Record summary:
Structure probing data (2A3) for a 207-nucleotide construct. The reactions ran in a buffer of 150 mM KOAc, 10 mM MgCl2 and 150 mM bicine (pH 8.5), at 24 C.
RNA sequence: GGGAACGACUCGAGUAGAGUCGAAAAAGCGAUGAUACGUCAUCGCAACGAUUGCCUGAUCGUAAAACAGGAGACGGCCGUGGCCGCGACCACGUAAAAAAGCGUAACGUGGUCUACGGCCCACGAAAAAAGCGCGGAACGUUCGCGUUCCGCGCAACAACCUAGAUUAGUUCGCUAAUCUAGGUUGAAAAGAAACAACAACAACAAC
Reactivity to 2A3 in 0.01 (KOAc 150mM, MgCl2 10mM, bicine 150mM(pH8.5), 24C), signal-to-noise 3, nucleotides 027 to 156: a000g010c020g000a010u010g010a000u020a070c250g090u010c010a000u000c000g000c000a000a010c000g010a000u000u030g020c000c000u000g010a000u020c020g100u220a020a030a000a010c010a000g000g010a020g070a040c150g060g020c040c000g020u040g000g000c000c000g020c000g010a050c030c080a000c020g000u050a100a100a060a040a020a010g100c050g010u030a040a020c000g000u000g010g000u020c010u020a010c010g000g000c010c000c000a010c010g020a090a040a010a020a010a020g010c000g000c010g010g010a000a000c010g070u190u210c220g010c000g100u000u000c010c000g000c000g000c000a010a000